[RMDB]
An RNA of 177 nucleotides, treated with DMS and 2A3 and read out base by base. Source: RMDB library OK2TRN, as collected in RNAgym. Conditions: 150 mM KOAc, 10 mM MgCl2 and 150 mM bicine (pH 8.5), 24 C. The DMS profile rests on 51,375 reads.
RNA sequence: GGGAACGACUCGAGUAGAGUCGAAAACUACAGGCAUUUCGAGCUUGGACAGUGUUAGGUCUGCACCGAAUAUACACUGGAGGGCGAUACGUGUACUCAGUCGCCUUCCCAAGGACUGAACGGACCGCAUAUGAUUUUUAUUCGUAAAAAUCAUGUGAAAAGAAACAACAACAACAAC
Reactivity to DMS in 0.01 (KOAc 150mM, MgCl2 10mM, bicine 150mM(pH8.5), 24C), signal-to-noise 9, nucleotides 027 to 126: c070u000a100c080a050g000g010c020a120u000u010u010c150g010a160g010c020u000u000g000g010a250c110a050g010u000g010u000u010a100g020g010u000c050u010g010c150a080c050c030g000a090a090u010a090u010a060c070a060c070u000g000g010a110g000g010g010c010g010a050u000a090c150g010u000g010u000a070c140u000c050a100g010u000c000g000c020c020u000u000c010c010c090a110a080g010g010a080c090u000g000a060a100c050g000g010a060c060c080g000
Reactivity to 2A3 in 0.01 (KOAc 150mM, MgCl2 10mM, bicine 150mM(pH8.5), 24C), signal-to-noise 9, nucleotides 027 to 126: c020u080a040c030a020g010g010c050a060u050u140u270c120g090a050g010c000u020u040g040g050a040c040a060g040u040g040u130u120a050g020g020u010c060u110g030c100a020c030c020g010a040a010u160a010u020a100c060a010c060u020g000g020a020g020g000g000c010g010a010u040a110c120g090u110g070u160a100c060u040c070a020g010u000c000g000c010c000u000u010c010c000c000a040a040g040g010a040c070u090g030a100a010c030g000g020a020c010c010g010